[RMDB]
RNA sequence: GGGAACGACUCGAGUAGAGUCGAAAAGCGAUGUUAUUGAAGACCAUUUUUGAUGGUAUAACCGAAAUCAAACCGGACACUAAGGUGUUCCGUGUUCUUAUUGGUUUCGUCGCCAUGUCUGAUGGGAGCUUACUCUGUCGUUCGCGACAGAGUAAGCAAAAGAAACAACAACAACAAC
Reactivity to DMS in 0.01 (KOAc 150mM, MgCl2 10mM, bicine 150mM(pH8.5), 24C), signal-to-noise 1, nucleotides 027 to 126: g010c090g010a100u000g000u000u000a150u000u000g000a120a150g010a110c000c020a000u000u000u030u030u000g000a060u000g010g030u010a130u000a160a120c270c030g010a000a010a030u000c040a000a040a170c000c010g000g000a040c000a010c000u000a020a080g030g000u000g000u000u010c000c000g000u020g010u000u000c130u020u000a130u000u020g010g010u000u000u020c020g030u010c220g010c010c000a050u000g010u000c040u030g010a040u010g010g000g020a100
Reactivity to 2A3 in 0.01 (KOAc 150mM, MgCl2 10mM, bicine 150mM(pH8.5), 24C), signal-to-noise 2, nucleotides 027 to 126: g070c060g110a110u100g070u260u120a130u100u110g080a030a040g060a060c000c000a000u020u060u020u050u130g050a020u030g000g050u040a050u070a150a050c060c010g000a020a000a000u040c020a010a000a030c010c020g000g000a000c000a000c000u050a160a100g160g020u020g030u160u000c010c000g110u190g030u080u040c060u070u210a230u040u050g000g000u000u030u020c040g020u020c020g040c000c000a060u180g190u150c060u010g070a050u030g080g000g000a050